Source: RMDB library OK3TST, as collected in RNAgym. This 207-nucleotide RNA was probed chemically with DMS and 2A3. For DMS, 1,951 sequencing reads were counted. For 2A3, 5,141 sequencing reads were counted. The reactions ran in a buffer of 150 mM KOAc, 10 mM MgCl2 and 150 mM bicine (pH 8.5), at 24 C.
[RMDB]
RNA sequence: GGGAACGACUCGAGUAGAGUCGAAAACGAUCCUCGAGAGAGGAUCGACGAGUCUUCGGACUCGAUUACCGCGUAGAUGUGCCGCGGGGCUACGAUGGUAUUGUGGGAAAGAAUACCAUUGUACCUUCUUGUCGUAGCCGAACAACUAGCACGUCAACCGUAGGUGACGUUUCGACGUCACCUACGGAAAAGAAACAACAACAACAAC
Reactivity to DMS in 0.01 (KOAc 150mM, MgCl2 10mM, bicine 150mM(pH8.5), 24C), signal-to-noise 1, nucleotides 027 to 156: c050g000a040u020c000c050u020c000g000a280g000a300g020a030g030g000a000u010c000g000a070c000g010a060g000u000c000u000u000c230g110g000a040c000u010c000g000a090u000u010a200c010c000g030c060g030u000a080g000a020u010g030u000g000c030c020g030c050g000g000g030g040c010u000a010c020g060a080u000g000g000u000a050u000u000g090u000g000g050g000a160a040a170g000a130a150u000a190c010c010a040u000u000g030u000a050c030c070u010u000c140u000u000g050u020c000g000u000a010g060c040c010g000a070a040c060a020a150c080u000a090g000c060a000c000g000u020c000a050a260
Reactivity to 2A3 in 0.01 (KOAc 150mM, MgCl2 10mM, bicine 150mM(pH8.5), 24C), signal-to-noise 4, nucleotides 027 to 156: c010g000a000u000c000c000u000c010g060a060g020a010g000a000g020g000a000u000c000g000a010c000g000a000g000u010c000u050u160c270g110g000a000c000u000c000g000a070u130u140a080c000c010g000c010g010u030a110g000a010u010g000u000g000c010c000g000c010g050g010g000g000c000u000a000c010g020a020u100g000g000u010a010u020u030g000u020g000g010g060a080a200a120g140a120a080u120a100c000c000a000u000u020g000u000a000c000c000u170u210c130u130u290g030u010c000g000u000a000g000c000c010g010a030a010c020a010a080c050u090a000g010c000a000c000g010u000c010a020a020